[RMDB]
RNA sequence: GGGAACGACUCGAGUAGAGUCGAAAAGUCUCAACAGAUUAAAACAUCACUUGUGAUUAAAUUGAUUGGUAUAAAACUAUAAGUGAACCAUUCUGUUCGUUCCAUGUAUUAGAUGGGAACAGCCAAAUUAAUUUGAAAUCAAGAAAUUAUUAAAAUAGCCUAAUCACUGAUUCGUCAGUGAUUAGGCAAAAGAAACAACAACAACAAC
Reactivity to 2A3 in 0.01 (KOAc 150mM, MgCl2 10mM, bicine 150mM(pH8.5), 24C), signal-to-noise 1, nucleotides 027 to 156: g030u010c020u020c030a030a080c060a000g170a050u200u300a070a050a060a060c000a040u050c030a030c000u010u000g000u020g030a020u050u030a010a030a020u000u000g000a000u000u000g010g000u040a010u040a120a260a050a040c060u060a070u050a300a070g030u050g020a090a040c050c000a060u280u020c020u030g020u050u000c000g070u090u070c010c010a040u050g000u050a220u210u100a060g100a060u010g000g000g000a020a020c000a000g000c000c000a000a070a220u000u000a000a000u010u030u000g060a020a080a050u060c000a000a010g070a070a240a090u110u240a070u100u250a160a210a090a150u220a050